[RMDB]
RNA sequence: GGGAACGACUCGAGUAGAGUCGAAAACGUACGCGUCGUACGAUCAGUACGAUCCAGAUCGGCCGCGCGAUCAUAGUGAUCAUCUGUGCUGCGCUGGCCAGCAGAGUGACGUACGAUCGCGCAGAGGCCGCGGGAAGUUAUUCGUAACUUCCCGCGGAAAAGAAACAACAACAACAAC
Reactivity to DMS in 0.01 (KOAc 150mM, MgCl2 10mM, bicine 150mM(pH8.5), 24C), signal-to-noise 3, nucleotides 027 to 126: c030g020u000a050c100g030c210g000u000c030g020u010a030c040g000a110u010c190a160g020u000a020c050g000a050u000c150c050a110g010a120u030c050g020g020c010c030g010c020g000c010g010a010u000c010a060u000a050g020u010g010a110u000c010a010u000c000u010g010u000g010c030u000g000c070g030c150u010g010g000c050c020a020g010c020a040g000a020g010u000g000a040c020g010u000a050c060g000a000u010c010g010c000g010c010a090g000a140g010g010
Reactivity to 2A3 in 0.01 (KOAc 150mM, MgCl2 10mM, bicine 150mM(pH8.5), 24C), signal-to-noise 3, nucleotides 027 to 126: c030g070u140a030c080g040c050g040u000c000g010u060a040c000g030a240u270c090a000g020u040a010c000g020a030u040c040c000a060g040a220u170c060g030g000c010c020g040c010g000c020g030a010u020c020a030u050a000g220u130g160a300u020c040a020u020c040u040g130u020g060c010u000g000c040g060c120u150g180g090c070c000a010g020c020a010g000a010g050u050g010a000c020g030u030a010c030g020a020u060c010g020c000g030c030a020g020a080g090g030
Description
The record gives the reactivity of an RNA of 177 nucleotides to DMS and 2A3. The 2A3 profile rests on 3,115 reads. For DMS, 2,936 sequencing reads were counted. For 2A3 the reverse transcriptase was SuperScript II with manganese.